Source: RMDB library M2PK90, as collected in RNAgym. Chemical mapping of a 177-nucleotide RNA with 2A3. The 2A3 profile rests on 1,197 reads. The reactions ran in a buffer of 150 mM KOAc, 10 mM MgCl2 and 150 mM bicine (pH 8.5), at 24 C. 2A3 adducts were read by reverse transcription with SuperScript II with manganese.
RNA sequence: GGGAACGACUCGAGUAGAGUCGAAAAAUAAAGCAUCGGCAUGUUGGAAGCAGCAAACCUUCAUGCAAGGUGCAAGACGAUGCAUCCCAAGAAUCAGACAAACGACUCUACUCGAGUCGACAAAAAAACUCUAAUAGUUGUUCGCAACUAUUAGAGUAAAAGAAACAACAACAACAAC
Reactivity to 2A3 in 0.01 (KOAc 150mM, MgCl2 10mM, bicine 150mM(pH8.5), 24C), signal-to-noise 1, nucleotides 027 to 126: a000u150a030a110a010g000c000a000u000c050g030g000c010a000u000g020u010u030g070g020a200a040g030c180a010g010c040a140a070a030c000c000u010u010c020a010u050g000c060a060a210g030g000u040g050c060a000a010g050a000c060g040a000u060g010c030a120u070c000c000c010a000a010g060a030a030u040c050a000g090a110c060a070a060a000c020g010a000c010u030c020u000a010c020u010c000g000a000g020u030c000g000a000c000a010a030a000a000a000a000